Background
Chemical mapping of a 207-nucleotide RNA with DMS and 2A3. It was measured as part of the RMDB library M2RFPK. For DMS, 3,226 sequencing reads were counted.
[RMDB]
RNA sequence: GGGAACGACUCGAGUAGAGUCGAAAAUUAAUACUGCUACAUUUUUAAGACCCUUAGUUAUUUAGCUUUACCGCGCAGGAUGGGGUGCAGCGUUCCUGCAAUAUCCAGGGCACCUAGGUGCAGCCUUCAUGCCUCAUGCCGUUCGCGGCAUGAGGAAGUAGGUUAUUAAGUUCGCUUAAUAACCUACAAAAGAAACAACAACAACAAC
Reactivity to DMS in 0.01 (KOAc 150mM, MgCl2 10mM, bicine 150mM(pH8.5), 24C), signal-to-noise 2, nucleotides 027 to 156: u000u010a070a090u010a070c060u000g000c010u000a110c020a100u000u020u020u000u000a050a130g020a160c040c000c040u010u000a100g010u000u000a040u000u000u010a060g020c050u000u000u000a070c060c090g030c030g000c010a100g050g000a080u000g010g030g050g030u000g000c020a060g000c070g000u000u000c010c010u000g020c220a100a090u000a080u000c070c040a080g010g020g020c000a050c040c030u000a040g020g020u000g000c040a090g030c030c070u000u000c050a130u010g010c040c010u000c030a010u000g000c010c020g060u000u010c300g050c040g030g020c000a000u000g000a010g010g020a000a010
Reactivity to 2A3 in 0.01 (KOAc 150mM, MgCl2 10mM, bicine 150mM(pH8.5), 24C), signal-to-noise 3, nucleotides 027 to 156: u060u040a040a050u060a140c020u020g020c000u040a050c050a170u090u130u080u050u120a110a050g060a080c010c020c010u060u060a070g020u100u090a140u130u110u120a040g000c010u010u060u090a070c050c020g040c010g000c050a000g030g010a010u030g020g000g000g030u030g000c030a010g020c020g060u060u070c000c000u000g000c000a030a060u060a030u120c070c080a020g010g000g000c010a030c020c030u050a060g050g030u050g060c020a040g030c010c000u060u100c030a060u110g040c000c000u000c000a000u000g000c000c010g030u040u000c220g010c020g080g000c010a000u010g000a000g000g000a000a000